[RMDB]
RNA sequence: GGGAACGACUCGAGUAGAGUCGAAAACAAGCAUCAAGACGGGUGACCUGGCCAACCUGGAGCAGGUCGGGCUGCGCGGGCUGAUACGGGUGAUUGACUCCGAACACCCGUACUUGAGUGUCACUCACUGGAGGGAGCUAUUCGUAGCUCCCUCCAGAAAAGAAACAACAACAACAAC
Reactivity to DMS in 0.01 (KOAc 150mM, MgCl2 10mM, bicine 150mM(pH8.5), 24C), signal-to-noise 2, nucleotides 027 to 126: c130a100a120g020c040a180u000c100a090a080g000a040c070g000g030g010u000g010a060c020c040u000g020g000c120c040a020a080c000c100u010g000g070a300g010c010a020g020g000u000c180g040g020g010c020u000g020c010g000c090g000g010g000c060u000g000a120u000a030c040g010g010g020u010g000a100u010u000g000a140c060u000c080c060g000a070a300c000a050c000c000c000g000u000a020c110u000u040g000a050g060u000g000u020c040a110c100u000c100a170
Reactivity to 2A3 in 0.01 (KOAc 150mM, MgCl2 10mM, bicine 150mM(pH8.5), 24C), signal-to-noise 1, nucleotides 027 to 126: c010a030a030g060c010a050u070c030a180a020g030a010c030g000g030g030u010g030a060c020c010u110g020g020c030c000a050a020c090c010u050g050g000a070g070c060a010g040g180u110c090g000g040g060c030u050g040c110g000c070g000g010g000c030u050g000a010u060a090c020g040g000g050u030g050a260u080u090g070a110c030u000c110c080g000a000a000c000a010c010c010c000g000u040a090c000u040u040g050a050g030u090g020u080c090a040c070u010c010a030